The data come from the RNA Mapping Database (RMDB), library OK2TRN. An RNA of 177 nucleotides, treated with 2A3 and DMS and read out base by base.
RNA sequence: GGGAACGACUCGAGUAGAGUCGAAAAAGAGCCUGAGCACCUCUAAGGAGCUGCAGCGCCAGUUCCACGUCUACCAGCUCCAGCAGCUGGAUCAGGAACUCCUGAAGCUGGAGGAUACAGAGAAGAAGUUCGUAUUGUGUUUCGACACAAUACGAACAAAAGAAACAACAACAACAAC
Reactivity to 2A3 in 0.01 (KOAc 150mM, MgCl2 10mM, bicine 150mM(pH8.5), 24C), signal-to-noise 2, nucleotides 027 to 126: a000g050a030g030c030c040u040g020a040g020c000a090c030c020u100c080u150a140a190g030g000a030g050c010u100g060c000a050g060c030g010c070c010a000g020u000u020c010c030a090c060g060u030c030u040a100c010c030a030g020c000u020c010c000a020g000c010a020g020c050u100g030g030a050u070c020a000g090g040a070a060c040u020c030c000u000g030a030a000g000c010u030g010g010a000g000g000a020u070a100c110a040g080a010g030a250a000g050a110a040
Reactivity to DMS in 0.01 (KOAc 150mM, MgCl2 10mM, bicine 150mM(pH8.5), 24C), signal-to-noise 2, nucleotides 027 to 126: a070g010a190g030c060c010u020g040a100g010c060a110c070c000u070c140u020a090a100g020g000a020g030c020u000g000c000a030g000c140g010c070c050a100g010u000u000c000c020a120c190g050u000c030u000a160c070c050a070g000c000u000c010c140a060g020c100a040g000c040u000g000g000a070u020c060a110g010g000a090a110c220u000c010c000u000g010a040a040g030c040u010g000g000a120g010g000a090u020a040c070a110g000a100g010a110a110g000a090a120
For 2A3 the reverse transcriptase was SuperScript II with manganese. For DMS the reverse transcriptase was MarathonRT.